[RMDB]
RNA sequence: GGGAACGACUCGAGUAGAGUCGAAAAGAUAUGGACCUGAGCAACAGCCUCUGGUCGGAAACGACCGAAGAGGACAUGCUCAUGUCCUAAGUCAAAACGCAUACAUGACUUCGGUCAUGUAUGCGAACUUCUAGAACGCGUUCGCGCGUUCUAGAAGAAAAGAAACAACAACAACAAC
Reactivity to DMS in 0.01 (KOAc 150mM, MgCl2 10mM, bicine 150mM(pH8.5), 24C), signal-to-noise 1, nucleotides 027 to 126: g020a050u000a300u000g010g000a020c020c070u030g000a010g000c000a010a230c260a300g000c010c000u000c000u000g000g030u030c000g050g000a050a080a150c000g000a020c020c030g000a080a030g010a010g000g030a100c100a240u000g010c000u000c010a000u000g000u000c000c000u000a020a090g020u000c040a150a090a150a180c020g000c000a000u000a000c000a000u000g000a000c000u000u000c130g000g000u000c000a000u010g000u000a000u000g000c000g010a040a010
This 177-nucleotide RNA was probed chemically with DMS. Values cover nucleotides 27 to 126.